This 177-nucleotide RNA was probed chemically with 2A3 and DMS. 2A3 adducts were read by reverse transcription with SuperScript II with manganese. The 2A3 profile rests on 3,454 reads. For DMS, 1,882 sequencing reads were counted.
[RMDB]
RNA sequence: GGGAACGACUCGAGUAGAGUCGAAAAGACUACAACUUCGGUUGUAGUCAAAUAAAAGCGAGUUCCGACUUCACGGAACAAGUACACGCAUGAAGUAUAAAAAAACCGGUUCCUUCGGGAACCGGAACUAUUCAAUGGUGUUCGCACCAUUGAAUAGAAAAGAAACAACAACAACAAC
Reactivity to 2A3 in 0.01 (KOAc 150mM, MgCl2 10mM, bicine 150mM(pH8.5), 24C), signal-to-noise 3, nucleotides 027 to 126: g000a000c010u000a000c010a010a000c000u040u110c240g110g000u000u000g000u000a000g000u010c000a000a000a010u010a000a080a010a000g080c060g000a040g050u000u000c010c000g070a110c070u170u120c140a040c100g000g020a030a000c010a010a030g050u050a010c100a020c090g050c040a050u110g060a090a040g100u110a060u260a240a160a040a010a000a000a060c000c000g030g000u000u010c010c000u030u050c170g070g000g000a000a000c000c000g000g000a000a000
Reactivity to DMS in 0.01 (KOAc 150mM, MgCl2 10mM, bicine 150mM(pH8.5), 24C), signal-to-noise 2, nucleotides 027 to 126: g000a000c000u000a000c000a010a000c000u010u010c170g050g010u000u000g000u000a010g010u010c000a010a090a090u000a040a110a100a110g010c050g000a220g050u000u000c000c010g010a160c140u000u000c140a150c020g000g000a010a030c000a050a090g020u000a110c220a100c070g010c070a100u010g000a070a030g010u000a130u010a000a010a100a110a090a080a130c020c000g000g000u000u000c000c000u000u000c230g020g010g000a010a000c000c010g010g000a000a020